Record summary
The data come from the RNA Mapping Database (RMDB), library OK1LIB. The record gives the reactivity of an RNA of 177 nucleotides to DMS and 2A3. The reactions ran in a buffer of 150 mM KOAc, 10 mM MgCl2 and 150 mM bicine (pH 8.5), at 24 C. For 2A3 the reverse transcriptase was SuperScript II with manganese.

RNA sequence: GGGAACGACUCGAGUAGAGUCGAAAAUAGAUAUUACGUCAACACUUUUAGAGCAAGGCGGUAUAAAUGCAAGUAAAUUCGGUGUAUUUAUCAAUACAGCAGGUGGAGUGAAAGGCCCAGCCGGUCCCAUGACCACCGUAUUCGUACGGUGGUCAUGAAAAGAAACAACAACAACAAC
Reactivity to DMS in 0.01 (KOAc 150mM, MgCl2 10mM, bicine 150mM(pH8.5), 24C), signal-to-noise 3, nucleotides 027 to 126: u050a050g050a070u030a040u020u010a090c110g040u000c120a060a130c170a130c010u030u000u030u040a060g030a070g020c090a060a110g000g020c050g000g010u020a060u000a040a050a020u020g000c040a030a080g020u000a030a120a060u030u040c100g010g020u000g000u020a010u010u020u000a090u000c080a070a010u030a040c080a050g000c070a020g000g010u010g000g000a110g020u010g010a030a040a160g000g010c000c000c000a070g020c090c050g010g000u020c030c030
Reactivity to 2A3 in 0.01 (KOAc 150mM, MgCl2 10mM, bicine 150mM(pH8.5), 24C), signal-to-noise 3, nucleotides 027 to 126: u180a020g090a040u120a010u090u070a080c030g070u010c030a050a060c030a080c050u010u140u200u250a080g040a010g040c040a130a020g020g000c010g040g020u040a010u030a020a080a000u080g020c090a030a050g060u220a070a130a290u130u060c090g020g000u000g000u000a020u000u000u010a120u080c030a000a030u070a170c050a040g080c010a010g040g020u030g030g010a030g030u050g040a150a080a000g030g000c000c000c000a010g060c000c020g020g000u040c020c050